[RMDB]
RNA sequence: GGGAACGACUCGAGUAGAGUCGAAAAGUCCAGAAUGGCUUCCCUAGCUGCUGCCCCAAGGGACCACAUAAGACAACAGGGAGGUUCAGGGGAGUCAACACUCUGAAGAAUGAAUGUAGAUCCAUAAGAGACAGAGAUAAGAAGGAACCAGCAGAUAGAUUUAAAUCGUCUUCGGACGAUUUAAAUCAAAAGAAACAACAACAACAAC
Reactivity to 2A3 in 0.01 (KOAc 150mM, MgCl2 10mM, bicine 150mM(pH8.5), 24C), signal-to-noise 1, nucleotides 027 to 156: g040u000c010c000a000g130a100a240u080g010g000c030u020u030c010c010c010u000a010g000c050u120g020c060u100g060c090c020c000c000a080a180g060g030g000a040c050c000a110c030a150u250a030a080g130a040c000a110a040c040a090g080g000g000a110g080g050u010u030c120a010g000g010g000g000a020g000u030c000a030a000c020a000c010u020c090u090g020a050a020g060a130a160u140g040a140a000u080g100u080a040g040a160u000c040c000a020u060a120a050g020a030g020a040c030a000g050a000g020a010u050a130a030g050a050a060g020g000a020a030c040c010a020g050c030a000g040a060u090a030